RNA sequence: GGGAACGACUCGAGUAGAGUCGAAAAGAUAUGGAACACUAUACGGGAGGCCGUCGGAAACGACGGGCCGACGAUCGUACGUGUUCCUAAGUCAAAACGAGUUCGUUACUUCGGUAACGAACUCGAACUGAUAGUCCAACUUCGGUUGGACUAUCAGAAAAGAAACAACAACAACAAC
Reactivity to DMS in 0.01 (KOAc 150mM, MgCl2 10mM, bicine 150mM(pH8.5), 24C), signal-to-noise 3, nucleotides 027 to 126: g010a020u000a080u000g000g010a010a010c000a020c010u000a300u000a020c010g040g010g020a230g000g000c000c010g000u010c010g020g000a010a020a080c000g010a010c000g010g010g000c010c000g000a040c060g000a050u000c030g020u000a030c300g010u000g000u000u010c000c000u000a000a070g010u000c010a110a070a120a240c000g010a010g010u000u000c000g000u000u000a000c000u000u010c200g020g010u000a000a000c000g000a020a000c000u000c000g020a020a070
Reactivity to 2A3 in 0.01 (KOAc 150mM, MgCl2 10mM, bicine 150mM(pH8.5), 24C), signal-to-noise 1, nucleotides 027 to 126: g010a000u050a010u110g000g010a000a000c000a010c020u100a050u060a300c040g040g070g020a010g010g000c000c000g000u030c000g000g010a020a060a010c000g010a010c040g020g090g000c020c010g040a010c000g040a150u190c010g000u010a030c000g000u000g030u000u000c000c000u010a010a000g000u000c000a020a040a050a140c030g010a000g000u000u010c020g000u020u000a000c000u040u080c290g160g010u000a000a000c000g000a000a000c000u010c000g010a000a000
Background:
This 177-nucleotide RNA was probed chemically with DMS and 2A3. For 2A3, 3,333 sequencing reads were counted. It was measured as part of the RMDB library TTRDEL. The DMS profile rests on 2,226 reads.